Structure probing data (DMS) for a 177-nucleotide construct. Reactivities are given for positions 27 through 126. DMS adducts were read by reverse transcription with MarathonRT.

RNA sequence: GGGAACGACUCGAGUAGAGUCGAAAAAGACCUUCGACGAGCGGGUGGCGAGGAAGAACAACCUGAACGUGGAGUCCAAGGAGGAGGUCUUCCGGGCCAUCGAGGUGGUGGCCUCCGUAGGCGGGUAGAGUCAUGGACUAUUCGUAGUCCAUGACUCAAAAGAAACAACAACAACAAC
Reactivity to DMS in 0.01 (KOAc 150mM, MgCl2 10mM, bicine 150mM(pH8.5), 24C), signal-to-noise 1, nucleotides 027 to 126: a050g010a060c020c020u000u000c040g000a090c050g000a160g000c090g000g000g050u000g010g020c080g030a210g010g010a070a070g010a080a070c070a080a060c020c010u000g020a060a020c080g020u000g000g000a200g000u000c070c030a050a110g000g020a220g000g000a090g010g000u000c010u000u010c010c080g020g000g010c000c010a020u000c060g000a150g010g040u010g000g000u000g000g010c010c010u000c020c050g000u000a070g000g010c060g010g020g000u010a090